[RMDB]
RNA sequence: GGGAACGACUCGAGUAGAGUCGAAAAUUGAUAUGACAGAAGCUCCAUAUAACACAAUAAGAUUUAGUUAUGAAGCAUUCUUACCUAAGGGCACUAAUGUUAUUCCUAAGUAUUCAGACGAUGAUGGUAAGACUUGGAAAACAUUUACUAAGUCUGCCUUGAGUUUGUAAUUCGUUACAAACUCAAGAAAAGAAACAACAACAACAAC
Reactivity to 2A3 in 0.01 (KOAc 150mM, MgCl2 10mM, bicine 150mM(pH8.5), 24C), signal-to-noise 6, nucleotides 027 to 156: u050u050g030a040u050a060u180g040a020c020a040g090a140a030g060c040u030c040c060a020u050a030u080a160a050c070a030c060a160a160u210a210a030g010a030u020u030u090a030g000u020u030a030u050g050a080a010g020c020a040u050u010c000u020u020a010c000c010u020a040a050g050g020g000c040a020c050u050a070a090u110g070u120u110a140u150u070c000c000u000a030a000g010u030a070u070u080c040a020g040a060c030g030a060u060g020a020u070g040g010u010a030a010g000a030c040u010u010g030g010a040a060a030a020c010a010u090u120u060a010c010u010a000a020g000u010c000u010g040c010
Reactivity to DMS in 0.01 (KOAc 150mM, MgCl2 10mM, bicine 150mM(pH8.5), 24C), signal-to-noise 4, nucleotides 027 to 156: u000u000g010a140u010a060u000g010a180c040a300g010a120a110g010c020u000c010c000a030u000a060u000a080a120c060a240c060a080a110u000a090a100g010a120u000u010u000a060g010u000u000a030u000g020a060a100g020c020a100u000u000c020u000u000a040c020c020u000a090a180g030g010g010c020a050c090u000a020a070u010g010u010u000a100u000u000c020c010u000a040a090g020u000a060u000u000c070a080g000a120c060g010a080u000g010a110u010g010g010u000a030a040g020a020c050u020u000g030g000a080a090a090a140c060a050u000u000u000a110c020u000a040a070g010u010c000u010g020c080
Source information: The record gives the reactivity of an RNA of 207 nucleotides to 2A3 and DMS. For DMS, 8,365 sequencing reads were counted. The RNA was probed in 150 mM KOAc, 10 mM MgCl2 and 150 mM bicine (pH 8.5) at 24 C.